Chemical mapping of a 177-nucleotide RNA with DMS and 2A3.
Source: RMDB library OK1LIB, as collected in RNAgym.
The RNA was probed in 150 mM KOAc, 10 mM MgCl2 and 150 mM bicine (pH 8.5) at 24 C.
DMS adducts were read by reverse transcription with MarathonRT.
The 2A3 profile rests on 13,674 reads.
For 2A3 the reverse transcriptase was SuperScript II with manganese.
The DMS profile rests on 8,597 reads.
RNA sequence: GGGAACGACUCGAGUAGAGUCGAAAAACGGGCAGUGGCGAUGGCAACGCGGCAGCCGCAGGGUCGACUUCUUCGCAGCCGCAACAGACGGGUCACGGGCAAAGAGGGGGACUCGUUCUGUUGGAAGAUGAUACGCCUAUUUCGAUAGGCGUAUCAUAAAAGAAACAACAACAACAAC
Reactivity to DMS in 0.01 (KOAc 150mM, MgCl2 10mM, bicine 150mM(pH8.5), 24C), signal-to-noise 3, nucleotides 027 to 126: a070c090g010g000g020c040a050g020u000g010g020c020g020a100u020g000g000c090a080a110c090g010c020g010g000c040a090g000c060c020g000c050a060g000g010g000u010c040g000a110c060u010u000c030u000u010c040g010c100a080g020c040c030g000c000a020a020c000a010g000a020c000g000g020g010u000c010a130c090g010g020g000c130a070a090a070g000a160g000g010g000g000g000a020c010u010c000g000u030u000c010u000g010u000u000g000g000a080a050g000
Reactivity to 2A3 in 0.01 (KOAc 150mM, MgCl2 10mM, bicine 150mM(pH8.5), 24C), signal-to-noise 8, nucleotides 027 to 126: a010c050g020g030g010c040a050g020u050g100g000c030g050a100u080g040g030c040a070a030c050g010c020g060g000c020a020g030c020c010g030c030a040g030g030g010u040c020g010a050c010u050u020c010u030u030c060g010c060a020g030c010c030g020c010a000a010c000a000g010a000c010g020g000g000u010c020a030c090g030g060g000c120a130a130a030g080a120g040g030g010g010g000a000c000u000c010g030u160u050c010u010g000u000u010g010g010a030a020g080